[RMDB]
About this RNA: The record gives the reactivity of an RNA of 207 nucleotides to 2A3. The data come from the RNA Mapping Database (RMDB), library RNAMAK. Values cover nucleotides 27 to 156.
RNA sequence: GGGAACGACUCGAGUAGAGUCGAAAAACGAGCAAACUUCGGUUUGCUCGUAAAAAGAUAUGGAAUCAGAAGUACAUCGAUCUUAAUGUGUCGGAAACGACAUUAAGGGAGUACCUGAUUCCUAAGUCAAAAAGAUUCAUUGUUCGCAAUGAAUCAACACUCACAAGACGUUCGCGUCUUGUGAGUGAAAAGAAACAACAACAACAAC
Reactivity to 2A3 in 0.01 (KOAc 150mM, MgCl2 10mM, bicine 150mM(pH8.5), 24C), signal-to-noise 2, nucleotides 027 to 156: a000c020g000a010g020c010a000a000a000c000u030u060c120g010g000u000u000u000g000c010u010c000g000u010a000a000a000a000a000g010a000u010a000u010g000g000a000a000u000c000a000g160a300a140g090u000a000c010a040u260c220g000a010u000c000u010u030a040a050u040g110u040g030u090c010g000g000a000a000a000c010g010a000c000a000u000u000a000a000g020g000g020a030g010u000a000c000c000u000g010a000u010u010c000c010u000a000a000g000u000c000a000a000a030a100a100g000a010u000u000c010a010u000u020g020u080u160c270g000c080a010a000u010g000a000a000u010c000a010a040